RNA sequence: GGGAACGACUCGAGUAGAGUCGAAAACGAAGUCCAGCAUGUUCUGGAAGUGGAAGGCCUCUUCCAUCUCGCCCAGAGCCGGUGCGUACCGGGCCAGGUACUGCCGCGGCCUGAGGUCGUGGUUGCCCUCGUGCAUCAGGAAAGGGCCGUCGUAGACGGAUCCAUCUCCGUUCGCGGAGAUGGAUCCAAAAGAAACAACAACAACAAC
Reactivity to 2A3 in 0.01 (KOAc 150mM, MgCl2 10mM, bicine 150mM(pH8.5), 24C), signal-to-noise 2, nucleotides 027 to 156: c050g090a120a000g070u010c000c000a000g000c060a070u220g060u160u110c000u000g020g030a060a030g080u110g040g010a150a040g000g000c010c030u140c000u030u000c010c010a100u070c020u000c020g030c000c030c000a010g000a060g040c040c040g040g030u090g000c000g020u030a000c020c020g020g140g050c080c050a080g010g010u010a030c030u130g000c030c000g070c030g030g010c000c020u080g030a090g050g050u160c040g020u030g010g000u020u110g030c030c010c010u110c030g120u260g040c000a020u030c020a090g000g010a060a020a020g030g020g000c010c040g010u030c020g060u100a100g010a100c140
Reactivity to DMS in 0.01 (KOAc 150mM, MgCl2 10mM, bicine 150mM(pH8.5), 24C), signal-to-noise 1, nucleotides 027 to 156: c030g010a140a130g050u020c000c000a020g000c050a210u000g030u000u000c030u020g000g010a070a100g040u010g000g010a060a040g030g000c060c040u000c030u020u000c000c000a090u030c040u000c100g000c040c000c030a110g020a170g030c000c050g010g010u020g030c000g010u000a020c020c050g020g000g020c130c160a110g030g030u000a020c090u030g080c040c010g010c010g000g000c020c010u000g000a060g030g010u010c030g000u020g040g000u000u000g000c060c000c040u010c130g000u000g040c050a060u000c030a160g030g000a050a110a130g030g010g020c020c010g030u010c040g040u000a080g020a160c090
Background: An RNA of 207 nucleotides, treated with 2A3 and DMS and read out base by base. It was measured as part of the RMDB library OK3TST. The RNA was probed in 150 mM KOAc, 10 mM MgCl2 and 150 mM bicine (pH 8.5) at 24 C. Reactivities are given for positions 27 through 156. For 2A3, 1,310 sequencing reads were counted.